[RMDB]
Notes:
Source: RMDB library OK2TST, as collected in RNAgym. Structure probing data (2A3 and DMS) for a 177-nucleotide construct. The RNA was probed in 150 mM KOAc, 10 mM MgCl2 and 150 mM bicine (pH 8.5) at 24 C.

RNA sequence: GGGAACGACUCGAGUAGAGUCGAAAAGCGAUUUCAUUUUCUCCACCGCGCUUUCACGGCUUGAUACAGCAAAGCAGACCACGCUGGAAAGUGGAAUUGCCCAGAAUGUCGAACUGCUGAUCAAUGAACUCAGGAUAUGAUUCGUCAUAUCCUGAGUAAAAGAAACAACAACAACAAC
Reactivity to 2A3 in 0.01 (KOAc 150mM, MgCl2 10mM, bicine 150mM(pH8.5), 24C), signal-to-noise 8, nucleotides 027 to 126: g020c020g040a040u010u070u060c040a050u060u070u070u030c050u040c040c010a060c040c040g040c000g000c010u070u110u110c080a050c080g050g010c020u030u070g030a040u170a200c020a010g020c020a060a060a010g030c010a000g020a030c010c030a030c080g040c020u030g010g040a060a020a020g030u060g020g050a090a080u050u060g030c020c000c000a050g070a100a090u140g040u080c030g010a060a040c050u040g000c010u020g020a070u060c040a040a120u130g050a030
Reactivity to DMS in 0.01 (KOAc 150mM, MgCl2 10mM, bicine 150mM(pH8.5), 24C), signal-to-noise 8, nucleotides 027 to 126: g010c060g010a050u000u000u010c030a040u000u000u000u000c050u000c070c080a090c130c050g000c040g000c110u010u000u000c080a110c090g010g010c050u000u000g000a100u000a110c120a070g000c050a050a070a050g020c060a150g010a100c130c120a060c160g010c070u000g000g010a060a060a040g020u000g010g000a030a050u010u000g010c080c010c020a100g010a090a070u010g010u010c050g000a090a110c080u000g010c030u000g000a090u000c070a060a100u010g010a130